Chemical mapping of a 177-nucleotide RNA with DMS and 2A3. 2A3 adducts were read by reverse transcription with SuperScript II with manganese. The reactions ran in a buffer of 150 mM KOAc, 10 mM MgCl2 and 150 mM bicine (pH 8.5), at 24 C.
RNA sequence: GGGAACGACUCGAGUAGAGUCGAAAAGAUAUGGACACAGCUUUUGACGAAGUACACUCGGAAACGAGUGAUACUUCGAUAAGCUGGUCCUAAGUCAAAGAACCGCGUCGUUCGCGACGCGGUUCAACUCAUACUCCAAGUUCGCUUGGAGUAUGAGAAAAGAAACAACAACAACAAC
Reactivity to DMS in 0.01 (KOAc 150mM, MgCl2 10mM, bicine 150mM(pH8.5), 24C), signal-to-noise 4, nucleotides 027 to 126: g010a030u010a300u000g000g010a020c000a100c010a010g010c000u000u000u000u000g010a200c130g010a010a010g030u000a010c000a000c000u000c010g010g010a100a080a160c010g000a020g010u000g010a090u000a000c000u000u000c000g000a050u000a010a010g020c000u000g010g000u000c000c000u000a020a090g010u000c030a070a170a160g000a020a010c000c000g040c000g010u000c000g020u010u010c210g020c010g000a000c000g030c000g000g000u000u000c000a020a060
Reactivity to 2A3 in 0.01 (KOAc 150mM, MgCl2 10mM, bicine 150mM(pH8.5), 24C), signal-to-noise 4, nucleotides 027 to 126: g020a010u080a030u130g030g000a050c130a000c010a300g010c020u060u110u150u260g290a190c120g010a010a000g000u000a000c010a000c000u000c010g030g000a050a070a040c010g010a000g010u000g000a010u000a000c000u010u000c000g010a000u000a000a000g000c000u000g010g010u000c000c000u010a060a010g040u000c010a110a090a250g000a030a000c000c000g010c000g020u000c010g020u060u130c300g000c050g190a000c020g000c020g030g000u000u000c000a000a000